Structure probing data (DMS and 2A3) for a 177-nucleotide construct. It was measured as part of the RMDB library RFMREP. Reactivities are rounded to 0.1 and cut off at 0 and 3. For 2A3, 20,215 sequencing reads were counted. 2A3 is a SHAPE reagent: it acylates the 2'-hydroxyl of flexible nucleotides of all four kinds. For DMS the reverse transcriptase was MarathonRT. For 2A3 the reverse transcriptase was SuperScript II with manganese.
RNA sequence: GGGAACGACUCGAGUAGAGUCGAAAACAGGAGUUCGCUCCUGCUUGAUGAGCAACUACAUACAGUUCAAGUCCAAAUGCCGUAUUGAGCCUGUAUGUUUACUUCUCUACGCCGUUCUUCGGAACGGGCAUUAAAUGGCAUUCGUGCCAUUUAAUGCAAAAGAAACAACAACAACAAC
Reactivity to DMS in 0.01 (KOAc 150mM, MgCl2 10mM, bicine 150mM(pH8.5), 24C), signal-to-noise 8, nucleotides 027 to 126: c020a020g020g010a010g010u000u020c240g030c000u000c000c000u000g010c060u010u000g010a130u000g010a060g010c140a050a100c190u000a050c010a010u000a020c010a030g000u000u000c010a010a040g000u000c110c080a060a110a120u020g020c140c100g010u000a130u000u000g000a020g000c110c050u000g010u000a010u000g000u000u000u010a060c110u000u000c060u000c010u010a120c200g010c010c000g010u000u000c000u000u010c180g020g000a010a010c010g000g000
Reactivity to 2A3 in 0.01 (KOAc 150mM, MgCl2 10mM, bicine 150mM(pH8.5), 24C), signal-to-noise 8, nucleotides 027 to 126: c010a010g000g020a010g020u070u110c150g060c120u000c010c010u000g030c050u060u120g070a150u100g010a020g020c050a030a040c020u030a000c010a010u010a010c000a000g000u000u010c010a030a010g070u010c050c040a090a160a180u240g080c090c060g060u080a090u070u020g010a010g020c030c070u000g000u020a000u010g000u010u030u030a060c020u050u040c020u000c010u040a050c060g050c020c000g010u010u000c000u020u040c140g020g000a000a000c000g000g010